An RNA of 177 nucleotides, treated with 2A3 and DMS and read out base by base.
The RNA was probed in 150 mM KOAc, 10 mM MgCl2 and 150 mM bicine (pH 8.5) at 24 C.
2A3 adducts were read by reverse transcription with SuperScript II with manganese.
For 2A3, 891 sequencing reads were counted.

RNA sequence: GGGAACGACUCGAGUAGAGUCGAAAAACGUUUUGGGUGUCCACUCGACUAAACACGCACUCCAGGGAAGAGUCAAAAGUACCGCCCUAUGUCUUGUCUCCUCGUGGUGUCGAAGCAAUGGCGGAGUGGUUUGCAUUAAGUUCGCUUAAUGCAAACCAAAAGAAACAACAACAACAAC
Reactivity to 2A3 in 0.01 (KOAc 150mM, MgCl2 10mM, bicine 150mM(pH8.5), 24C), signal-to-noise 1, nucleotides 027 to 126: a070c060g020u110u120u080u100g030g000g040u050g080u110c000c000a010c010u070c050g090a060c000u080a080a230a000c080a000c040g050c020a040c010u000c010c040a010g000g100g030a090a070g060a040g070u060c000a120a140a010a050g040u000a110c030c010g030c000c000c000u050a120u090g060u070c000u030u060g000u000c030u040c020c030u080c070g020u090g000g000u050g050u030c020g090a030a040g070c050a010a050u150g010g000c000g000g030a040g050u070
Reactivity to DMS in 0.01 (KOAc 150mM, MgCl2 10mM, bicine 150mM(pH8.5), 24C), signal-to-noise 1, nucleotides 027 to 126: a040c140g020u000u000u000u000g000g030g000u010g000u000c030c030a140c040u010c110g010a050c010u010a040a040a020c100a050c110g030c100a070c030u000c010c050a070g000g000g010a090a050g000a070g010u000c040a040a050a040a060g010u000a080c050c030g000c010c010c170u000a150u000g000u010c050u000u000g000u000c010u000c010c040u000c240g010u000g000g010u020g020u010c020g010a100a020g040c110a090a060u000g000g000c010g010g040a160g050u010